The record gives the reactivity of an RNA of 177 nucleotides to 2A3 and DMS. For 2A3, 1,692 sequencing reads were counted. The RNA was probed in 150 mM KOAc, 10 mM MgCl2 and 150 mM bicine (pH 8.5) at 24 C. It was measured as part of the RMDB library VIROID.
RNA sequence: GGGAACGACUCGAGUAGAGUCGAAAACUUUCGACCCCACUCCUGCGAGACAGGAGUAAACCUAAACAGGGUUUUCACCCUUCCUUUAGUGUCCUUCCUCUCCUGGAGAGGUCUUCUGCCCUAGCCCGACGUUAGUUAGGUUCGCCUAACUAACGUCAAAAGAAACAACAACAACAAC
Reactivity to 2A3 in 0.01 (KOAc 150mM, MgCl2 10mM, bicine 150mM(pH8.5), 24C), signal-to-noise 1, nucleotides 027 to 126: c000u080u080u060c010g020a030c000c030c000c010a100c010u030c000c010u030g070c140g060a030g030a040c150a090g040g020a000g010u010a000a060a060c010c010u050a070a010a020c300a260g000g020g010u030u030u180u260c090a030c000c000c000u020u030c000c020u000u010u010a030g010u010g030u070c000c020u010u010c010c000u030c000u000c000c000u010g000g010a000g000a000g000g020u000c000u060u000c010u070g060c010c010c040u030a070g020c010c050c090
Reactivity to DMS in 0.01 (KOAc 150mM, MgCl2 10mM, bicine 150mM(pH8.5), 24C), signal-to-noise 1, nucleotides 027 to 126: c050u000u000u000c110g020a080c040c030c040c180a150c010u000c000c000u000g010c110g010a070g000a110c250a070g000g000a040g000u000a030a100a080c070c000u000a000a020a050c200a030g010g010g010u000u020u010u000c140a080c040c000c000u000u000c000c030u000u000u010a010g000u010g010u000c010c000u000u000c060c100u000c010u000c010c070u000g000g010a020g000a090g020g040u000c010u010u000c020u000g000c040c040c020u010a130g010c120c030c040